[RMDB]
RNA sequence: GGGAACGACUCGAGUAGAGUCGAAAAGAAAGAAAGAAAGUUCAUUGUUUAUCGCAAACUUUAAACUAUAACCAUUCAAACUUUUCCAGAAGUUAGUUUGAAUAGAAAUUAAAAAGAAACUUCUGAAUGACCUUGGCACCGUUCGCGGUGCCAAGAACAUCAUACCGUGCUUCGGCACGGUAUGAUGAAAAGAAACAACAACAACAAC
Reactivity to 2A3 in 0.01 (KOAc 150mM, MgCl2 10mM, bicine 150mM(pH8.5), 24C), signal-to-noise 1, nucleotides 027 to 156: g010a000a050a000g030a030a090a000g070a040a110a020g020u050u040c090a140u110u040g070u110u120u160a250u200c080g020c050a080a030a020c060u130u020u000a060a060a020c000u080a010u130a190a080c000c010a000u000u000c000a000a000a000c000u010u000u000u050c090c000a000g010a000a000g000u000u000a010g000u010u000u000g000a000a010u060a180g010a040a060a050u170u200a020a150a000a000a000g010a000a000a000c000u010u010c000u000g000a000a010u100g010a000c000c010u000u000g000g000c040a000c020c010g000u040u050c120g040c000g040g000u000g020c000c000a000a000g000a000a010
Structure probing data (2A3) for a 207-nucleotide construct. For 2A3 the reverse transcriptase was SuperScript II with manganese. Values are in units of 0.01, from 0 to 300, in steps of 10. Reactivities are given for positions 27 through 156. It was measured as part of the RMDB library M2RFOK.